Chemical mapping of a 177-nucleotide RNA with 2A3 and DMS.
RNA sequence: GGGAACGACUCGAGUAGAGUCGAAAAGAUAUGGAGUGAGAGGCGAUAAGACUUUGGUCGGAAACGACCAUGGUCUUUUGACGCCUCCCUCCUAAGUCAAAGGUUCUUUCGUUCGCGAAAGAACCAAGUAUGUUUGACUGUUCGCAGUCAAACAUACAAAAGAAACAACAACAACAAC
Reactivity to 2A3 in 0.01 (KOAc 150mM, MgCl2 10mM, bicine 150mM(pH8.5), 24C), signal-to-noise 3, nucleotides 027 to 126: g020a010u070a040u170g000g000a000g030u180g020a300g000a000g140g000c050g070a080u050a230a060g020a010c010u000u050u000g020g000u000c020g000g000a060a040a050c020g000a000c000c000a010u000g020g000u000c020u010u030u000u040g010a010c020g000c010c000u000c000c000c000u000c000c000u010a100a020g030u000c040a040a060a140g000g000u000u010c000u000u000u000c020g040u060u090c300g010c030g180a000a000a020g000a010a000c000c000a000a000
Reactivity to DMS in 0.01 (KOAc 150mM, MgCl2 10mM, bicine 150mM(pH8.5), 24C), signal-to-noise 2, nucleotides 027 to 126: g000a050u010a300u010g000g010a010g010u000g010a160g030a020g000g040c030g020a120u000a030a000g010a010c000u000u010u000g010g010u000c010g020g010a070a080a110c000g000a010c010c000a000u010g010g010u000c000u000u000u010u000g040a190c050g000c020c000u000c000c000c000u000c000c000u010a010a060g000u000c040a060a090a150g000g000u000u000c000u000u010u000c000g030u000u010c210g030c000g000a000a010a010g000a010a000c000c000a010a040